The data come from the RNA Mapping Database (RMDB), library OK1LIB. This 177-nucleotide RNA was probed chemically with 2A3 and DMS. Values cover nucleotides 27 to 126.
RNA sequence: GGGAACGACUCGAGUAGAGUCGAAAAUGUCUACCCAAUUAAAGAAUCUUGUAAAAGAUGGUAGACAACAGUGUAUAAUAUUUAGCAAUGAGUUCUGUGAGGGUGCAUAUGUCGCCAGGCAGACUGGCCAGGGACUCUAGUUCGCUAGAGUCCCUGGAAAAGAAACAACAACAACAAC
Reactivity to 2A3 in 0.01 (KOAc 150mM, MgCl2 10mM, bicine 150mM(pH8.5), 24C), signal-to-noise 3, nucleotides 027 to 126: u050g010u000c000u010a010c000c010c030a090a120u180u300a120a120a040g040a030a080u050c020u100u020g160u230a040a060a040a160g010a000u070g000g020u000a000g030a000c000a010a000c030a070g080u060g080u110a040u090a120a100u100a210u110u170u100a090g020c070a100a150u150g000a080g050u130u050c060u010g020u010g040a140g170g000g000u000g000c100a060u130a140u300g160u300c020g000c000c000a030g150g020c000a000g000a030c020u010g040g000
Reactivity to DMS in 0.01 (KOAc 150mM, MgCl2 10mM, bicine 150mM(pH8.5), 24C), signal-to-noise 2, nucleotides 027 to 126: u010g000u000c000u000a010c000c010c290a100a100u090u020a160a100a120g030a150a080u010c010u000u010g000u080a100a100a040a020g000a040u020g000g000u020a010g000a040c000a050a090c080a080g000u000g040u020a010u020a130a030u070a130u010u000u090a110g010c110a050a060u030g000a030g040u030u020c040u000g020u000g000a080g030g020g000u000g000c050a150u000a110u000g010u040c040g000c010c010a030g010g000c020a020g000a000c080u000g030g010
For 2A3, 1,086 sequencing reads were counted.
The DMS profile rests on 1,922 reads.